Chemical mapping of a 177-nucleotide RNA with 2A3 and DMS. The reactions ran in a buffer of 150 mM KOAc, 10 mM MgCl2 and 150 mM bicine (pH 8.5), at 24 C. For DMS, 4,006 sequencing reads were counted. Values cover nucleotides 27 to 126. The 2A3 profile rests on 3,122 reads.
RNA sequence: GGGAACGACUCGAGUAGAGUCGAAAAGCAUGUGGCCCCCGUAAGUGGGGUCCGGGUAAAACAACAGCCGCGGGUCGCACGCCCCGCCUCCGCGCAGGAUCGUGUGGACGAAGGAGACGCCGUCGCCAGACGUGUCUGUCUUCGGACAGACACGUCUAAAAGAAACAACAACAACAAC
Reactivity to 2A3 in 0.01 (KOAc 150mM, MgCl2 10mM, bicine 150mM(pH8.5), 24C), signal-to-noise 5, nucleotides 027 to 126: g050c060a090u160g090u220g110g010c020c000c000c000c010g270u230a140a060g080u300g140g000g000g000u010c010c000g000g030g040u130a120a120a060a040c060a030a020c040a050g040c040c010g020c010g000g000g030u060c010g000c030a010c020g030c010c000c000c040g000c010c010u050c030c030g050c050g030c070a050g040g050a080u130c050g030u060g010u060g080g040a020c060g030a120a060g080g010a040g010a000c040g020c030c020g010u010c010g030c050c030
Reactivity to DMS in 0.01 (KOAc 150mM, MgCl2 10mM, bicine 150mM(pH8.5), 24C), signal-to-noise 3, nucleotides 027 to 126: g000c120a100u010g020u070g030g010c000c000c000c010c010g060u070a060a170g060u080g020g000g000g030u000c010c000g020g000g010u020a040a040a120a110c180a080a160c140a130g020c020c010g020c050g020g000g020u000c030g030c040a050c080g030c210c000c010c070g000c020c030u030c070c100g000c050g000c060a150g000g020a040u040c060g020u000g020u050g010g000a060c020g000a130a110g000g000a090g000a070c050g000c040c010g000u000c060g000c050c130